RNA sequence: GGGAACGACUCGAGUAGAGUCGAAAAGCGUGUGGGAAAGGUCCAGCCUCAUAUGUCCUGUGAUCCUGAGGGGGAGAUAUGUGGUCAGACCUGUCCCACAGGCAAAACCUACCAGUUCGCUGGUAGGGUGACCUUCGAAGUUCGCUUCGAAGGUCACAAAAGAAACAACAACAACAAC
Reactivity to 2A3 in 0.01 (KOAc 150mM, MgCl2 10mM, bicine 150mM(pH8.5), 24C), signal-to-noise 1, nucleotides 027 to 126: g030c120g030u000g020u000g010g000g000a000a060a030g000g010u010c000c030a010g020c030c000u000c000a000u050a010u070g250u000c000c010u300g110u200g250a180u200c100c090u150g110a150g080g230g000g000g040a030g010a000u020a000u000g000u020g000g000u070c030a000g020a000c000c010u000g000u000c000c000c000a010c000a000g000g000c020a030a030a070a060c000c010u000a000c000c000a010g050u060u100c190g110c070u060g000g000u000a010g000g010